[RMDB]
RNA sequence: GGGAACGACUCGAGUAGAGUCGAAAACAGAGCAGCUCCAGCACCAAGCAGCCUACAGACCAGAUGUCCGCUGCGCCAGUGUAGCUGCCGUCCUCUCGCAGCACCUCUGGCGCCAUGAAGAAGGGCGGACGCACUGGUAGUUCGCUACCAGUGCGUCAAAAGAAACAACAACAACAAC
Reactivity to DMS in 0.01 (KOAc 150mM, MgCl2 10mM, bicine 150mM(pH8.5), 24C), signal-to-noise 3, nucleotides 027 to 126: c140a130g000a070g050c000a020g000c060u010c040c030a050g030c020a030c030c030a060a140g050c080a080g000c030c010u040a040c140a050g020a170c060c040a070g010a060u030g000u000c040c020g010c030u010g000c020g020c000c000a020g010u010g000u020a090g000c000u010g000c030c050g000u010c040c020u030c050u010c060g030c030a010g000c050a050c190c060u010c010u000g000g000c000g010c000c070a040u080g020a060a070g010a150a190g000g000g020c030g020
Reactivity to 2A3 in 0.01 (KOAc 150mM, MgCl2 10mM, bicine 150mM(pH8.5), 24C), signal-to-noise 4, nucleotides 027 to 126: c030a000g070a020g050c010a000g020c010u010c020c010a020g010c030a030c040c020a080a020g030c020a000g010c030c010u050a070c050a040g060a090c010c080a020g010a140u120g040u040c010c000g000c040u050g000c000g000c000c000a010g000u030g000u080a060g000c000u020g000c010c000g100u050c000c020u070c010u020c070g000c000a010g010c000a030c010c060u140c010u100g000g000c020g000c010c020a120u200g010a050a080g070a030a040g050g020g000c000g000
This 177-nucleotide RNA was probed chemically with DMS and 2A3. Source: RMDB library OK1LIB, as collected in RNAgym.